[RMDB]
RNA sequence: GGGAACGACUCGAGUAGAGUCGAAAAGCAGGGGUAGGUAUCAUGUACAGCGUGGAUCUGCUGGACAAAGGGAUAUUCAUGUCCUGGGCAGGGUGAAGCAGGACAGGGAGGUUUCAUCACUCUACUCAGAAUGGUGCACGGUUUAAAAGUUAGAAAACUAUACGUAAAAUUUCGAUUUUACGUAUAGAAAAGAAACAACAACAACAAC
Reactivity to 2A3 in 0.01 (KOAc 150mM, MgCl2 10mM, bicine 150mM(pH8.5), 24C), signal-to-noise 3, nucleotides 027 to 156: g040c040a020g030g040g000g010u070a040g030g020u050a050u100c030a080u080g050u060a040c040a030g010c030g070u080g040g050a080u040c040u090g020c030u010g010g020a030c030a010a090a020g080g010g000a050u060a090u130u100c080a020u090g010u010c000c010u010g000g020g010c050a060g040g020g020u020g020a000a000g020c000a010g000g020a010c020a000g000g040g000a030g040g010u030u040u060c020a040u030c010a040c000u000c000u000a030c000u010c030a040g040a110a060u060g000g010u010g010c020a020c100g020g040u040u030u040a060a100a020a000g020u150u160a040g100a130a110a000a000
Reactivity to DMS in 0.01 (KOAc 150mM, MgCl2 10mM, bicine 150mM(pH8.5), 24C), signal-to-noise 1, nucleotides 027 to 156: g010c040a070g060g020g030g030u020a070g020g010u020a070u010c050a070u000g050u000a030c030a050g010c030g000u010g030g000a120u010c060u030g000c030u040g080g070a070c080a060a100a130g010g020g000a100u000a090u010u000c160a130u010g010u000c000c020u000g010g040g070c000a030g010g020g010u000g000a110a130g000c030a040g020g050a060c080a080g010g000g000a140g010g040u020u010u000c050a180u000c040a040c010u000c000u010a030c030u020c010a080g000a080a070u000g000g050u000g070c010a040c030g010g000u000u000u000a030a050a090a090g010u000u010a110g000a130a080a140a180

Chemical mapping of a 207-nucleotide RNA with 2A3 and DMS.
For DMS, 2,019 sequencing reads were counted.
For 2A3 the reverse transcriptase was SuperScript II with manganese.
Reactivities are given for positions 27 through 156.
In probing experiments dimethyl sulfate is read out at A N1 and C N3, which are open when not base-paired.
The 2A3 profile rests on 2,260 reads.
It was measured as part of the RMDB library OK3TST.